[RMDB]
RNA sequence: GGGAACGACUCGAGUAGAGUCGAAAACACUUGUUUCGACAAGUGAAAAAGCGUACUACAACUAGAGUGAUGACCUACACUAAGUAAGUCCCAAAUAGGACUUAUAUGUGUAGCAAGCGAUUGGUUGUAUCGCAAAAAAUACUCGUUCGCGAGUAAAUACGUUCGCAUGAUUCGUCAUGCGAACGUAAAAAGAAACAACAACAACAAC
Reactivity to 2A3 in 0.01 (KOAc 150mM, MgCl2 10mM, bicine 150mM(pH8.5), 24C), signal-to-noise 2, nucleotides 027 to 156: c040a000c030u060u040g050u090u090u100c190g080a010c000a010a010g030u060g080a190a030a000a000a000g030c020g070u180a050c030u010a000c050a000a000c000u130a050g000a030g060u020g020a140u040g030a050c000c000u000a000c000a000c000u050a190a170g000u010a010a000g000u040c030c060c000a170a300a270u300a180g000g000a000c000u010u000a000u000a000u030g000u010g000u020a000g000c010a100a220g000c000g300a200u210u020g020g000u040u000g000u000a000u080c010g000c000a000a000a000a000a000a120u080a010c000u000c000g070u080u070c240g060c010g130a000g050u060a000a000a030
Background
Structure probing data (2A3) for a 207-nucleotide construct. The data come from the RNA Mapping Database (RMDB), library RNAMAK. The RNA was probed in 150 mM KOAc, 10 mM MgCl2 and 150 mM bicine (pH 8.5) at 24 C. Reactivities are rounded to 0.1 and cut off at 0 and 3.